[RMDB]
RNA sequence: GGGAACGACUCGAGUAGAGUCGAAAACGCUUUCGAGCGCUAGAGUCCUUAUCUAGCCGGUUUAUACUUUCGAGUGUGAACCCGAUAUUCCGCGGAUCACUAUGAGUCGUUCGCGGCUCAUAGUCCGGCUCAAAGGACAUCAUGGCCUGUUCGCAGGGUUCCUUAGUAAGUUCGCUUACUAAGGAACAAAAGAAACAACAACAACAAC
Reactivity to DMS in 0.01 (KOAc 150mM, MgCl2 10mM, bicine 150mM(pH8.5), 24C), signal-to-noise 3, nucleotides 027 to 156: c010g010c000u010u000u000c170g000a050g030c010g050c010u000a040g010a180g010u000c030c030u000u000a070u000c050u010a080g020c000c000g010g010u000u000u000a030u000a090c020u010u000u000c160g010a070g040u000g040u000g000a070a040c010c020c110g000a090u010a110u000u000c010c010g040c300g010g010a040u000c120a110c010u000a020u000g000a000g050u010c000g020u000u000c230g020c020g040g000c000u010c000a000u000a000g000u000c020c030g000g000c000u000c040a070a140a030g010g000a030c040a100u000c040a140u000g010g010c030c100u000g010u000u000c080g030c020a130g020g010
Reactivity to 2A3 in 0.01 (KOAc 150mM, MgCl2 10mM, bicine 150mM(pH8.5), 24C), signal-to-noise 5, nucleotides 027 to 156: c020g020c020u080u050u080c150g050a010g010c020g000c020u010a010g000a000g070u090c030c000u090u100a080u050c040u020a000g010c020c000g000g010u030u050u030a080u030a060c040u080u110u100c140g050a040g020u040g010u030g070a040a030c020c030c000g010a020u020a070u140u050c040c020g000c020g010g010a020u070c050a030c010u000a000u010g000a000g010u000c000g010u000u080c160g000c000g080g000c000u000c000a000u000a000g000u000c000c000g010g000c010u000c000a030a020a000g020g030a040c020a090u140c050a090u150g080g010c010c010u030g030u060u100c200g000c090a010g000g060